[RMDB]
Description
This 177-nucleotide RNA was probed chemically with DMS and 2A3. The RNA was probed in 150 mM KOAc, 10 mM MgCl2 and 150 mM bicine (pH 8.5) at 24 C. The data come from the RNA Mapping Database (RMDB), library TTRDES. 2A3 adducts were read by reverse transcription with SuperScript II with manganese.
RNA sequence: GGGAACGACUCGAGUAGAGUCGAAAAGAUAUGGAACCAGAGGUCUUUUGACGCUGGAUAUUCGGAAACGAAUAUUUUAGCGAUAAGACCCUGGUUCCUAAGUCAAACUCUCAGUUCGCUGAGAGAAGAACACUAUUUUCUUCGGAAAAUAGUGUUCAAAAGAAACAACAACAACAAC
Reactivity to DMS in 0.01 (KOAc 150mM, MgCl2 10mM, bicine 150mM(pH8.5), 24C), signal-to-noise 2, nucleotides 027 to 126: g010a030u000a160u030g000g010a000a000c020c000a010g010a290g040g010u000c000u010u000u010u010g020a200c100g020c000u000g000g020a000u000a000u010u010c000g010g010a040a030a090c000g010a040a010u000a000u000u000u000u010a000g070c000g030a160u010a010a010g020a020c000c000c000u000g010g000u000u000c000c000u000a000a040g000u000c010a160a080a200c000u000c000u000c000a010g020u000u020c300g010c010u010g000a020g010a000g000a100a100
Reactivity to 2A3 in 0.01 (KOAc 150mM, MgCl2 10mM, bicine 150mM(pH8.5), 24C), signal-to-noise 4, nucleotides 027 to 126: g000a000u030a020u070g010g000a020a010c010c010a010g270a300g080g010u030c040u220u300u300u300g300a180c120g000c000u000g020g020a010u010a000u010u010c010g010g020a000a030a010c010g010a010a010u000a030u030u100u160u300a050g010c020g020a060u100a270a000g000a000c000c000c010u000g000g010u000u000c010c000u000a010a000g000u000c010a030a040a230c010u010c000u000c000a000g010u080u100c190g070c200u000g010a010g000a000g000a030a030